This 177-nucleotide RNA was probed chemically with DMS. The RNA was probed in 150 mM KOAc, 10 mM MgCl2 and 150 mM bicine (pH 8.5) at 24 C. The DMS profile rests on 790 reads. For DMS the reverse transcriptase was MarathonRT. It was measured as part of the RMDB library OK2TRN.

RNA sequence: GGGAACGACUCGAGUAGAGUCGAAAACUUUGUGAAGAGGCGCGCGCACGCGAGCGUGAGCAUGCGCAUGCUGGCGAUUGGAGACGGCGCGAAUGACGUGGCAAUGAUCCAGGCGGCCGACAUCGGCGGACCCAGUGGAUUUCGAUCCACUGGGUCCAAAAGAAACAACAACAACAAC
Reactivity to DMS in 0.01 (KOAc 150mM, MgCl2 10mM, bicine 150mM(pH8.5), 24C), signal-to-noise 1, nucleotides 027 to 126: c050u010u000u010g010u020g000a160a170g010a140g020g010c010g000c010g000c010g000c000a130c050g020c050g020a060g020c130g040u020g000a090g030c070a040u000g020c080g020c030a100u000g050c020u000g000g000c030g000a040u010u020g040g000a080g000a190c150g050g010c020g010c010g000a150a070u000g020a110c040g000u010g000g000c070a040a090u000g010a130u000c040c050a100g010g010c100g020g030c040c040g010a080c170a040u010c040g040g030c140